[RMDB]
The data come from the RNA Mapping Database (RMDB), library M2RFPK. An RNA of 207 nucleotides, treated with 2A3 and DMS and read out base by base.
RNA sequence: GGGAACGACUCGAGUAGAGUCGAAAAUGCUGGCGUUGACAGCGCCCAACGCUUCACAACCUGAAAGAAGCGCCUGUUAUCAGGACGGUUGAUCCAUUUACCGGUGCAGACCUCUGCAAACACCGGGUUUAACAAGCAUCUUUCGAGAUGCUUGUAACCAUUUAGAGGGUUUCGACCCUCUAAAUGGAAAAGAAACAACAACAACAAC
Reactivity to 2A3 in 0.01 (KOAc 150mM, MgCl2 10mM, bicine 150mM(pH8.5), 24C), signal-to-noise 2, nucleotides 027 to 156: u150g000c050u040g010g020c110g120u100u090g080a090c010a000g010c010g020c010c000c000a030a020c010g020c000u010u020c030a060c040a190a010c000c000u000g010a010a020a000g010a000a000g000c010g030c000c000u180g020u190u130a190u300c010a010g000g000a000c030g000g030u000u010g020a050u070c030c050a030u060u100u160a100c000c000g010g010u020g000c020a020g090a270c040c130u150c030u140g020c040a040a090a010c030a000c000c010g000g000g000u040u130u060a020a000c000a000a010g010c000a000u010c000u040u080u150c180g080a000g000a010u010g000c000u020u000g000u000a000a000
Reactivity to DMS in 0.01 (KOAc 150mM, MgCl2 10mM, bicine 150mM(pH8.5), 24C), signal-to-noise 2, nucleotides 027 to 156: u000g000c050u000g020g000c050g050u000u000g010a170c020a080g010c030g000c020c160c010a060a050c010g000c000u010u000c020a120c140a060a230c020c010u020g000a130a140a240g000a070a020g020c030g050c000c050u000g020u010u000a080u000c030a070g020g000a180c050g020g030u000u000g000a270u010c040c070a220u000u010u000a090c000c000g020g020u000g000c000a120g020a220c100c120u010c050u000g000c070a110a120a050c030a000c010c020g040g020g000u020u000u000a100a050c000a000a010g020c010a000u000c000u000u000u010c240g060a050g030a010u000g000c010u010u010g000u000a020a170
The 2A3 profile rests on 1,453 reads. For DMS, 2,423 sequencing reads were counted. The reactions ran in a buffer of 150 mM KOAc, 10 mM MgCl2 and 150 mM bicine (pH 8.5), at 24 C.